[RMDB]
RNA sequence: GGGAACGACUCGAGUAGAGUCGAAAAACACUCACUAGUGAUUAUACGAUUACAGUCUUUGUUACUGUCAACCUUGCAAAAGUUUGCACUUAUGCCAUCUUUGCUUACUCACCACAGCUUACACUUGCCAAGGUGUAAAGUUCGCUUUACACCUUGGAAAAGAAACAACAACAACAAC
Reactivity to DMS in 0.01 (KOAc 150mM, MgCl2 10mM, bicine 150mM(pH8.5), 24C), signal-to-noise 3, nucleotides 027 to 126: a040c070a090c020u000c070a070c060u000a140g020u000g010a060u000u010a130u010a120c190g000a080u020u000a040c000a030g000u000c020u000u000u000g000u000u020a060c050u000g000u010c110a030a040c050c010u010u000g000c100a050a080a050a070g000u000u000u010g000c060a070c190u000u000a080u000g010c070c040a020u000c050u000u010u000g020c010u010u000a060c090u000c020a090c020c020a040c100a040g020c080u010u010a060c060a040c090u000u000g000
Reactivity to 2A3 in 0.01 (KOAc 150mM, MgCl2 10mM, bicine 150mM(pH8.5), 24C), signal-to-noise 3, nucleotides 027 to 126: a000c010a000c010u030c020a070c090u060a060g040u010g030a040u070u140a090u040a120c090g040a040u000u080a020c000a010g030u000c030u080u250u170g100u150u070a010c010u010g020u060c030a020a020c010c020u020u100g000c020a040a040a070a120g030u040u040u070g000c000a020c020u190u060a050u160g010c010c010a020u000c030u030u030u020g000c010u020u020a020c010u020c020a040c040c000a010c000a000g010c010u060u110a020c070a020c020u010u000g010